[RMDB]
Chemical mapping of a 177-nucleotide RNA with 2A3 and DMS. It was measured as part of the RMDB library OK2TST. As a SHAPE reagent, 2A3 marks flexible, mostly unpaired nucleotides at the ribose 2'-OH. For DMS, 11,654 sequencing reads were counted. For 2A3, 7,935 sequencing reads were counted.
RNA sequence: GGGAACGACUCGAGUAGAGUCGAAAAGAGGAGUCCGGCGGACAUCGCCUGCCACUUCGCCAUCUGGUUGAAGAUCUCGUCCCCCGCUCUGCCCAUGAAAUCGCAGUACAUGAGCUCCACCACCGCCCCGUUAAUCAAUUUUCGAAUUGAUUAACGGAAAAGAAACAACAACAACAAC
Reactivity to 2A3 in 0.01 (KOAc 150mM, MgCl2 10mM, bicine 150mM(pH8.5), 24C), signal-to-noise 5, nucleotides 027 to 126: g060a020g030g010a020g020u040c060c050g020g030c040g020g010a060c030a110u130c070g000c020c020u010g040c010c000a060c010u030u030c020g010c020c000a160u170c160u250g030g040u110u290g050a040a030g040a150u050c030u040c080g100u070c000c000c000c000c000g020c000u000c010u030g030c030c000c000a040u060g030a030a090a020u070c040g000c030a000g020u050a030c010a080u050g010a020g010c010u020c020c010a020c010c010a020c010c010g030c010c020
Reactivity to DMS in 0.01 (KOAc 150mM, MgCl2 10mM, bicine 150mM(pH8.5), 24C), signal-to-noise 8, nucleotides 027 to 126: g000a110g020g010a110g010u010c100c110g010g020c120g010g010a080c090a090u000c080g000c030c010u000g010c050c070a180c040u000u000c030g000c020c020a150u000c170u010g010g020u000u010g010a050a050g010a130u010c060u000c060g010u000c010c010c010c030c040g010c040u000c020u000g010c010c020c030a080u010g010a050a080a080u010c100g000c020a040g010u010a080c070a070u000g000a090g010c020u000c030c020a060c040c020a080c030c040g000c070c090
The RNA was probed in 150 mM KOAc, 10 mM MgCl2 and 150 mM bicine (pH 8.5) at 24 C. Reactivities are given for positions 27 through 126.